The data come from the RNA Mapping Database (RMDB), library OK3TST. Structure probing data (2A3) for a 207-nucleotide construct. For 2A3 the reverse transcriptase was SuperScript II with manganese. The 2A3 profile rests on 730 reads. Reactivities are given for positions 27 through 156.
RNA sequence: GGGAACGACUCGAGUAGAGUCGAAAAGUGCCAGCUGGGUGCGGUGGCUCACGCCUGUCAUCGCAGCAGUUUGGGAGGCUGAGGUGGGCGGAUUGCUUGAACCCAGGAGUUCAAGACCAGCCUGGCCAAUAUAGUGAGACCCCAUCUCUACAAAAAAGAUGGUAAUAGUCUUCGGACUAUUACCAUCAAAAGAAACAACAACAACAAC
Reactivity to 2A3 in 0.01 (KOAc 150mM, MgCl2 10mM, bicine 150mM(pH8.5), 24C), signal-to-noise 1, nucleotides 027 to 156: g190u140g000c000c010a020g000c010u030g040g200g170u060g010c040g010g010u060g010g000c000u010c030a130c090g180c100c090u060g040u010c000a000u000c000g000c020a000g040c000a020g030u090u140u080g090g000g000a040g120g030c040u060g000a000g010g000u020g000g010g060c070g030g010a030u060u060g000c010u000u030g020a020a020c000c000c000a030g100g040a120g000u030u100c090a150a000g070a050c010c010a000g010c000c000u020g020g000c010c000a040a000u130a000u010a050g080u060g050a060g000a040c010c020c040c000a000u050c030u010c000u030a020c080a010a010a010a090a000a020